This 177-nucleotide RNA was probed chemically with DMS and 2A3. High DMS reactivity at an A or C suggests that its Watson-Crick edge is free. DMS adducts were read by reverse transcription with MarathonRT.
RNA sequence: GGGAACGACUCGAGUAGAGUCGAAAACAUCCUCAUUUGUAGCGGCCUUGUUCGACUGGCACAACGUGUGUCUAUACGUAUUUACUUACCUGUUACAUAACGACUGUACAGAGGAAUGUGUUGACACUAGGCAUUAGGUAUUCGUACCUAAUGCCUAAAAAGAAACAACAACAACAAC
Reactivity to DMS in 0.01 (KOAc 150mM, MgCl2 10mM, bicine 150mM(pH8.5), 24C), signal-to-noise 4, nucleotides 027 to 126: c190a070u000c300c000u020c050a090u030u010u030g000u020a070g010c030g000g000c070c000u000u010g020u010u030c120g020a080c090u010g000g000c090a050c040a120a120c200g000u010g000u000g000u000c060u010a050u020a030c050g000u000a050u020u010u030a070c080u010u030a110c130c050u000g000u000u010a000c010a040u030a130a120c130g010a090c140u010g000u010a000c040a100g000a090g000g000a080a030u010g020u000g000u010u010g000a070c130a020c110
Reactivity to 2A3 in 0.01 (KOAc 150mM, MgCl2 10mM, bicine 150mM(pH8.5), 24C), signal-to-noise 9, nucleotides 027 to 126: c050a070u050c070c030u100c070a140u060u100u180g090u030a030g050c030g030g020c000c020u080u090g040u080u110c050g050a090c060u050g030g050c020a010c020a060a180c090g140u110g000u000g000u050c030u070a090u030a070c040g070u040a130u070u150u060a140c060u060u060a060c020c020u050g050u140u080a010c020a030u100a210a080c090g120a100c130u040g000u050a010c010a020g040a040g060g060a110a050u080g020u010g010u020u040g010a020c030a000c040
Source: RMDB library OK1LIB, as collected in RNAgym. The reactions ran in a buffer of 150 mM KOAc, 10 mM MgCl2 and 150 mM bicine (pH 8.5), at 24 C.